[RMDB]
RNA sequence: GGGAACGACUCGAGUAGAGUCGAAAACAUAAGACCUCAGAGCUAAUGAGCCACAUACCUACCCAAGGUGAAAGCUCCUUCGCUCGCAAUGUGUAACUCAUGAUUCUCAUGACCCCUGGUUGGAGAGCGCGCUAACACGCCUUCGGGCGUGUUAGAACAUGCAUAAGGUCUUCGGACCUUAUGCAUGAAAAGAAACAACAACAACAAC
Reactivity to DMS in 0.01 (KOAc 150mM, MgCl2 10mM, bicine 150mM(pH8.5), 24C), signal-to-noise 1, nucleotides 027 to 156: c050a130u010a070a070g020a080c020c020u000c060a200g010a080g040c040u000a070a060u000g030a100g050c000c020a030c100a220u010a060c010c010u010a130c150c050c020a190a110g030g020u030g000a130a250a100g020c000u010c010c140u000u010c030g020c010u000c030g000c060a070a090u000g000u010g020u000a030a080c030u000c050a050u000g010a180u000u000c090u000c000a070u000g010a140c020c010c010c000u000g090g040u010u010g000g010a080g020a080g030c090g020c060g040c000u000a010a000c010a010c020g070c000c000u000u010c240g010g000g020c000g000u000g000u010u000a000g000a070a170
Reactivity to 2A3 in 0.01 (KOAc 150mM, MgCl2 10mM, bicine 150mM(pH8.5), 24C), signal-to-noise 2, nucleotides 027 to 156: c020a040u140a120a070g090a050c000c090u130c150a020g000a000g040c040u030a030a000u030g000a010g020c020c000a110c030a030u240a030c010c000u070a070c020c020c070a080a060g000g000u040g020a140a110a040g010c000u000c000c040u020u020c050g010c010u000c020g030c050a060a170u070g120u020g050u110a070a070c030u020c060a020u040g040a140u300u090c100u030c080a020u040g050a100c000c000c000c040u020g090g030u030u070g040g030a060g020a020g090c080g000c030g020c040u000a000a000c010a000c010g010c000c000u020u010c180g070g010g010c020g000u000g010u000u000a010g000a000a000